Chemical mapping of a 177-nucleotide RNA with DMS.
[RMDB]
RNA sequence: GGGAACGACUCGAGUAGAGUCGAAAAGAUAUGGAUAUGGCAAGGUCAGGGUCGGAAACGACCCAGAAGACUGAUGACCCAUCAUCCUAAGUCAAAACCCCCAAGUACGUUCGCGUACUUGGGGGAAUCUUGGAGUAUGCUUCGGCAUACUCCAAGAAAAAGAAACAACAACAACAAC
Reactivity to DMS in 0.01 (KOAc 150mM, MgCl2 10mM, bicine 150mM(pH8.5), 24C), signal-to-noise 1, nucleotides 027 to 126: g040a020u010a300u000g000g020a010u000a010u000g000g040c030a070a090g000g000u000c000a130g000g000g030u000c000g020g000a060a180a260c030g010a000c010c010c000a040g030a090a140g010a060c000u020g010a060u000g000a080c300c000c000a000u000c100a030u000c000c030u000a060a190g050u000c070a100a040a130a140c000c030c000c000c000a010a010g010u000a000c000g060u000u000c300g000c040g000u010a000c000u000u000g000g000g000g000g000a030a000
For DMS, 598 sequencing reads were counted.